The record gives the reactivity of an RNA of 177 nucleotides to DMS and 2A3.
It was measured as part of the RMDB library OK2TRN.
Reactivities are rounded to 0.1 and cut off at 0 and 3.
[RMDB]
RNA sequence: GGGAACGACUCGAGUAGAGUCGAAAAUGUGCGAUCACGAUCAACGUCGGAACACUUAGCUAAAAAUGUCGCUCUUUUUGCGGGCGAAUCUUCUUUGUUAGAUGUCGCCAAGUUUGCUUUAAAAGAAGCCAACACGAUAGUUCGCUAUCGUGUUGGCAAAAGAAACAACAACAACAAC
Reactivity to DMS in 0.01 (KOAc 150mM, MgCl2 10mM, bicine 150mM(pH8.5), 24C), signal-to-noise 1, nucleotides 027 to 126: u000g000u000g010c030g030a050u030c030a120c030g010a030u010c110a130a120c160g010u000c030g000g020a110a010c130a090c070u000u010a160g010c090u000a020a060a060a060a130u000g010u020c030g010c070u030c010u000u000u020u010u010g120c110g000g000g000c000g010a050a010u000c030u000u000c060u000u030u000g100u000u000a030g010a000u000g040u000c050g000c000c000a100a120g010u000u000u000g000c020u000u000u000a080a070a040a060g020a200a170
Reactivity to 2A3 in 0.01 (KOAc 150mM, MgCl2 10mM, bicine 150mM(pH8.5), 24C), signal-to-noise 1, nucleotides 027 to 126: u110g080u000g030c050g050a120u120c060a020c110g040a050u070c060a050a110c040g130u050c020g070g020a110a000c030a000c080u080u110a060g060c020u110a030a000a050a050a050u280g030u090c050g030c020u030c000u010u110u040u080u210g090c040g050g020g000c040g000a000a010u020c080u140u000c020u070u280u090g050u130u100a000g000a050u070g090u300c030g000c030c000a000a040g020u070u070u040g030c010u100u060u010a020a110a000a080g060a090a030